[RMDB]
RNA sequence: GGGAACGACUCGAGUAGAGUCGAAAAGAUAUGGACGGAUGGUGGGAGCGACGUAUCGGAAACGAUAUAGUCGCGAAGAACACUUUCCGUCCUAAGUCAAAAGCAUCAUGGGUUCGCCCAUGAUGCAUCACCAAACAUCGUUCGCGAUGUUUGGUGAAAAAGAAACAACAACAACAAC
Reactivity to DMS in 0.01 (KOAc 150mM, MgCl2 10mM, bicine 150mM(pH8.5), 24C), signal-to-noise 2, nucleotides 027 to 126: g000a000u000a030u020g000g000a020c020g000g000a020u000g000g010u000g000g000g000a080g000c000g010a040c000g020u000a010u000c000g010g010a020a010a030c000g030a010u010a000u000a070g030u010c000g030c000g000a030a110g020a140a200c020a010c000u000u000u000c000c010g010u010c010c000u000a000a040g000u010c010a110a140a130a150g010c010a000u000c010a010u000g000g000g010u000u020c300g010c010c010c000a000u000g000a000u000g000c000a040
Reactivity to 2A3 in 0.01 (KOAc 150mM, MgCl2 10mM, bicine 150mM(pH8.5), 24C), signal-to-noise 1, nucleotides 027 to 126: g000a010u020a010u060g000g000a000c010g000g020a010u030g000g000u000g010g000g080a300g050c010g000a000c000g000u000a020u000c000g000g030a010a000a000c020g010a020u030a010u040a200g030u000c000g000c000g020a010a030g050a030a000c000a000c020u030u000u000c000c000g000u000c000c030u000a000a000g010u020c020a040a060a080a050g000c000a000u000c010a000u010g050g010g020u050u160c300g160c020c000c010a010u010g010a010u000g000c000a000
Structure probing data (DMS and 2A3) for a 177-nucleotide construct. Reactivities are given for positions 27 through 126. For DMS the reverse transcriptase was MarathonRT. In probing experiments dimethyl sulfate is read out at A N1 and C N3, which are open when not base-paired. For 2A3 the reverse transcriptase was SuperScript II with manganese.